[RMDB]
RNA sequence: GGGAACGACUCGAGUAGAGUCGAAAAUCUCUCUUGUUCGCAAGAGAGAAAAGAACGCCAAAGUGUCGCAAACUUCCGCGUCAGGAAGGCGAAACGAGGUAAAAAGGGGGAUCUUCGGAUCCCCCAAGAAAAGCGAAAGGUUCGCCUUUCGCUUUUCAAAAGAAACAACAACAACAAC
Reactivity to DMS in 0.01 (KOAc 150mM, MgCl2 10mM, bicine 150mM(pH8.5), 24C), signal-to-noise 1, nucleotides 027 to 126: u000c000u000c010u000c010u000u000g000u000u020c140g040c000a000a010g010a020g000a030g010a050a050a050a100g000a200a100c130g020c010c000a020a060a130g000u000g000u010c000g000c040a040a030a300c030u000u000c040c060g050c300g020u000c210a060g000g010a000a060g030g000c020g000a000a070a020c000g000a300g000g000u000a030a040a050a150a100g000g000g000g000g000a020u000c000u000u000c160g030g010a020u000c000c000c000c000c000a000a010